[RMDB]
RNA sequence: GGGAACGACUCGAGUAGAGUCGAAAAGCCAACCUGAUGGCCCGUGAACACCCAGCCGAAAAUGAGGCCCGCCUUUUCCGGCCCGAAACGCUCGGCCGCGAGCUUGACGGUGGGCGGUACGGUUGCAUCACCCCUAUAUGUUCGCAUAUAGGGGUGAAAAAGAAACAACAACAACAAC
Reactivity to 2A3 in 0.01 (KOAc 150mM, MgCl2 10mM, bicine 150mM(pH8.5), 24C), signal-to-noise 4, nucleotides 027 to 126: g010c020c010a010a030c040c040u120g080a140u050g070g020c040c060c030g060u100g090a100a020c060a090c070c020c020a020g010c020c010g070a090a080a070a180u110g050a140g210g020c020c010c010g040c010c020u060u090u080u050c020c000g060g040c110c130c040g070a160a160a020c110g050c120u020c030g040g000c030c000g020c060g010a020g000c070u060u110g040a010c020g000g010u000g000g000g010c020g010g000u020a020c030g000g000u030u050g010c010a060
Reactivity to DMS in 0.01 (KOAc 150mM, MgCl2 10mM, bicine 150mM(pH8.5), 24C), signal-to-noise 6, nucleotides 027 to 126: g010c040c030a060a080c080c050u010g000a130u000g010g020c030c030c050g020u000g000a110a120c160a110c050c040c030a130g010c010c010g010a060a060a100a110u000g010a190g010g000c060c010c020g020c130c040u000u000u000u000c040c060g020g010c060c010c030g000a040a130a100c200g000c120u000c030g020g010c060c050g000c070g010a020g000c120u010u010g000a230c210g020g010u000g010g010g020c000g020g030u000a070c120g000g000u000u000g010c120a190